[RMDB]
RNA sequence: GGGAACGACUCGAGUAGAGUCGAAAAAUUGAGUUAUUUGCAGCCAGAUCAGCUGUUUGGUGGCCGACAGCCAGCGCUAUCACAAGCACUGUGGCAGGCUGUUGGUAUGCCAGAUCAAUUACAUUGGCUCUGAUAAGCUCUUCGGAGCUUAUCAGAGAAAAGAAACAACAACAACAAC
Reactivity to DMS in 0.01 (KOAc 150mM, MgCl2 10mM, bicine 150mM(pH8.5), 24C), signal-to-noise 3, nucleotides 027 to 126: a040u000u000g000a060g000u000u000a090u000u010u000g020c050a020g030c000c040a130g000a130u000c190a090g000c050u000g000u000u010u000g010g020u000g000g000c000c000g010a010c010a010g000c020c000a050g030c060g020c100u000a080u010c070a060c120a100a110g000c200a150c170u000g040u010g020g030c050a100g030g010c000u010g010u000u000g000g020u000a050u000g000c000c010a050g000a070u000c040a030a030u000u000a080c170a170u000u010g000g020
Reactivity to 2A3 in 0.01 (KOAc 150mM, MgCl2 10mM, bicine 150mM(pH8.5), 24C), signal-to-noise 2, nucleotides 027 to 126: a010u070u070g010a030g090u160u120a160u140u240u160g050c000a000g000c040c010a050g080a280u100c010a010g080c000u010g080u110u050u060g040g000u020g010g010c010c000g000a010c000a010g010c000c000a070g070c030g000c090u110a080u300c040a000c020a170a040g170c030a040c270u040g030u030g040g020c010a010g020g020c000u000g000u000u010g040g000u050a260u100g010c000c010a020g000a070u000c000a000a030u040u040a060c050a100u000u150g080g000